[RMDB]
RNA sequence: GGGAACGACUCGAGUAGAGUCGAAAAGAUCUGCGCCGAUCCGAAACGCUAGCAAACAGCCCGCAUCAUGUCGUCUCCUAACUUCGACGUGGAGAAAUACUGAGCUUAUGCGAGUAAGCCUGUUAGCAAUAGAUCAGAACGUUCGCGUUCUGAUCAAGCUUAGAUGCUUGUUCGCAAGCAUCUAAGCAAAAGAAACAACAACAACAAC
Reactivity to 2A3 in 0.01 (KOAc 150mM, MgCl2 10mM, bicine 150mM(pH8.5), 24C), signal-to-noise 4, nucleotides 027 to 156: g010a050u030c040u120g040c070g000c050c030g020a060u020c030c010g030a060a030a020c090g000c040u030a010g050c040a070a060a130c040a070g030c020c040c020g000c020a020u060c020a020u120g080u050c020g040u000c030u000c040c010u050a080a080c050u180u130c140g090a100c040g040u050g010g020a020g060a010a050a020u200a050c060u060g020a010g000c010u040u020a000u030g010c000g020a030g060u060a060a000g010c000c030u020g030u050u050a020g000c030a060a080u040a180g000a000u000c000a000g000a000a000c000g010u050u060c130g000c000g100u000u000c010u010g010a000u000c000a000a000
Reactivity to DMS in 0.01 (KOAc 150mM, MgCl2 10mM, bicine 150mM(pH8.5), 24C), signal-to-noise 1, nucleotides 027 to 156: g010a060u000c010u000g000c040g010c010c030g030a160u000c040c020g000a100a050a040c070g010c030u000a040g060c040a040a050a050c110a300g010c070c000c000g000c030a110u000c110a090u010g020u000c000g000u000c000u000c030c070u000a140a070c150u000u000c130g020a000c060g090u010g000g000a020g020a120a040a080u000a120c070u000g010a220g050c030u000u000a010u000g020c160g010a110g040u000a030a040g010c030c000u000g010u020u000a090g020c020a120a190u000a070g030a010u020c000a000g000a010a000c000g010u000u030c260g030c000g020u000u000c000u000g010a010u000c020a030a090